[RMDB]
The data come from the RNA Mapping Database (RMDB), library OK2TST.
Structure probing data (DMS) for a 177-nucleotide construct.
RNA sequence: GGGAACGACUCGAGUAGAGUCGAAAAAGAAGUGCAUAGAGUACUCUCAAGAGUGUUGGAAGCUGCACAUAAGAGGCUACUAUUCUGGUAUGGAGUGUUGAGGAAGAUAGGAAUUCCCACACGUAUAACCGAGUCUAAUCUUCGGAUUAGACUCGGUAAAAGAAACAACAACAACAAC
Reactivity to DMS in 0.01 (KOAc 150mM, MgCl2 10mM, bicine 150mM(pH8.5), 24C), signal-to-noise 1, nucleotides 027 to 126: a040g000a140a070g010u000g020c010a090u010a120g010a120g000u010a060c080u000c010u000c180a050a160g020a100g000u000g010u000u000g010g020a100a060g010c100u000g000c010a020c040a090u000a080a070g060a100g010g000c080u000a020c040u000a070u000u000c010u000g000g000u040a070u010g010g010a200g010u000g000u030u000g020a130g010g040a040a040g010a220u000a170g040g000a160a150u020u000c000c000c000a040c140a080c070g020u050a020u010a100
The RNA was probed in 150 mM KOAc, 10 mM MgCl2 and 150 mM bicine (pH 8.5) at 24 C. The DMS profile rests on 756 reads. DMS adducts were read by reverse transcription with MarathonRT.